[RMDB]
RNA sequence: GGGAACGACUCGAGUAGAGUCGAAAAUACCUUGAGUAUUGCUGAAUUCUGUUUAGCGUGCAUGCUCUUGGCUAUUCUCAUAGUGAUUGUCAAAUUUGGAGUUACUUAUUCGUCAAUUCAAUAUUUAAAAAGGUGCCGAUGUUCGCAUCGGCACCAAGAACAUCUUGUCGUUCGCGACAAGAUGUUCAAAAGAAACAACAACAACAAC
Reactivity to 2A3 in 0.01 (KOAc 150mM, MgCl2 10mM, bicine 150mM(pH8.5), 24C), signal-to-noise 1, nucleotides 027 to 156: u090a010c000c000u010u020g030a020g010u000a040u100u230g010c020u030g060a190a170u150u100c080u270g230u100u140u110a030g000c020g020u030g040c010a000u010g020c000u010c010u020u000g000g030c000u040a050u040u020c000u000c000a030u030a040g140u090g070a030u020u030g040u050c050a060a020a060u030u020u020g050g090a140g150u090u050a110c030u050u070a020u040u070c020g040u000c000a010a000u050u000c000a040a150u120a260u260u090u270a120a210a050a060a000g000g010u000g000c000c000g000a000u020g020u050u010c130g000c070a020u030c030g010g010c000a000c000c000a010a000
The record gives the reactivity of an RNA of 207 nucleotides to 2A3. Reactivities are rounded to 0.1 and cut off at 0 and 3. Source: RMDB library M2RFPK, as collected in RNAgym.